Chemical mapping of a 177-nucleotide RNA with DMS and 2A3. For DMS, 1,435 sequencing reads were counted. The reactions ran in a buffer of 150 mM KOAc, 10 mM MgCl2 and 150 mM bicine (pH 8.5), at 24 C.
[RMDB]
RNA sequence: GGGAACGACUCGAGUAGAGUCGAAAACUCAUUAUCGAUACCCUGUCGGAGGACGGCGUAGACACUAUUGCUAUCGGGUAUAACACUCAGUAUGAGAAGAUAGCGCUUCACGUGGUUAAUGAGGUAACCGUAAUGUGCGUUUCGACGCACAUUACGGAAAAGAAACAACAACAACAAC
Reactivity to DMS in 0.01 (KOAc 150mM, MgCl2 10mM, bicine 150mM(pH8.5), 24C), signal-to-noise 2, nucleotides 027 to 126: c000u010c010a060u010u010a030u000c040g010a160u000a040c050c100c010u000g020u010c020g010g020a150g010g010a050c010g070g030c200g010u010a010g030a190c060a020c040u000a120u020u010g010c010u000a010u000c040g010g010g020u000a080u020a130a100c210a100c000u000c000a180g000u030a090u010g000a020g010a140a140g020a030u000a000g010c030g000c270u010u000c110a030c110g000u000g020g010u000u000a000a030u010g000a000g000g020u000a090a160
Reactivity to 2A3 in 0.01 (KOAc 150mM, MgCl2 10mM, bicine 150mM(pH8.5), 24C), signal-to-noise 3, nucleotides 027 to 126: c020u010c000a010u000u060a040u080c050g030a030u020a070c040c030c020u050g030u030c020g090g130a110g210g000a020c000g010g000c050g020u000a010g020a030c010a010c050u090a070u070u200g000c010u020a010u020c030g150g000g050u170a090u080a180a030c110a020c010u060c010a060g180u170a210u280g090a030g000a070a030g030a010u020a010g040c010g010c020u090u140c100a050c100g040u030g010g000u020u030a020a010u020g010a020g020g040u050a070a040